[RMDB]
RNA sequence: GGGAACGACUCGAGUAGAGUCGAAAAGAGUAGCUGGGACUACAGGCACGUACCACCACGCGCGGCUAAUUUUUUUGCAUUUUUAGUAGAGACAGGGUUUCACCGCGUUAGCCAGGAUGGUCUUGUCUCUCUACUCCUGGUUCGCCAGGAGUAGAGAAAAAGAAACAACAACAACAAC
Reactivity to 2A3 in 0.01 (KOAc 150mM, MgCl2 10mM, bicine 150mM(pH8.5), 24C), signal-to-noise 1, nucleotides 027 to 126: g070a010g030u070a000g040c010u100g170g020g010a140c030u070a040c060a040g030g050c030a020c030g070u070a040c010c010a010c020c000a030c040g000c000g010c020g000g110c020u040a040a130u050u090u000u000u030u140u160g060c040a060u020u030u000u080u190a080g070u040a000g040a010g000a060c040a010g060g000g160u000u080u130c030a010c020c000g050c040g030u070u000a020g000c010c020a000g040g010a100u040g050g000u010c030u020u020g020u000c040
Reactivity to DMS in 0.01 (KOAc 150mM, MgCl2 10mM, bicine 150mM(pH8.5), 24C), signal-to-noise 2, nucleotides 027 to 126: g000a110g000u000a080g010c050u010g010g010g020a170c030u010a070c040a070g010g000c040a040c070g000u000a040c020c030a060c030c000a080c090g000c030g020c060g030g000c060u010a020a010u000u000u000u000u000u000u000g020c110a100u010u010u010u000u000a110g010u000a040g000a050g000a020c060a050g000g010g020u010u010u010c080a140c020c030g000c080g010u000u000a070g010c060c060a150g000g010a120u000g000g010u000c010u000u000g010u000c040

Source information: Chemical mapping of a 177-nucleotide RNA with 2A3 and DMS. For 2A3, 1,122 sequencing reads were counted. Source: RMDB library OK2TRN, as collected in RNAgym. The reactions ran in a buffer of 150 mM KOAc, 10 mM MgCl2 and 150 mM bicine (pH 8.5), at 24 C. For DMS the reverse transcriptase was MarathonRT.